[RMDB]
RNA sequence: GGGAACGACUCGAGUAGAGUCGAAAAGGCAACUCAGCGGCGGAGCCAUCCAGCGAAGGAAGCAUCUGGUCCGUUGCUAAUCCUUCGGAUGUAAUCAUUGGCGGCGCUUCUGCGCCCCGGGGCUGGUUCCAAGAUUAGUAUUCGUACUAAUCUUGGAAAAAGAAACAACAACAACAAC
Reactivity to DMS in 0.01 (KOAc 150mM, MgCl2 10mM, bicine 150mM(pH8.5), 24C), signal-to-noise 5, nucleotides 027 to 126: g010g000c050a060a080c070u020c040a070g010c040g000g020c050g010g000a130g000c070c020a040u010c080c030a110g000c050g000a030a020g010g010a050a040g000c010a020u000c030u010g010g000u010c100c060g010u010u000g010c010u010a070a100u000c020c000u000u000c010g000g000a060u010g000u030a120a080u020c120a090u020u010g010g020c110g000g000c030g020c020u000u030c140u010g010c050g000c020c010c020c010g000g000g000g000c050u000g010g010u010
Reactivity to 2A3 in 0.01 (KOAc 150mM, MgCl2 10mM, bicine 150mM(pH8.5), 24C), signal-to-noise 9, nucleotides 027 to 126: g040g010c020a030a050c040u020c070a030g020c010g060g010c030g020g040a020g020c000c000a020u010c020c020a030g060c030g050a020a010g010g000a020a010g010c010a020u010c030u130g110g070u070c050c040g010u010u010g000c000u030a030a090u030c000c000u010u010c010g010g020a060u050g050u170a100a090u120c090a120u050u110g040g000c050g020g040c010g020c000u180u090c070u170g010c010g010c000c000c000c000g010g000g010g010c020u030g050g000u020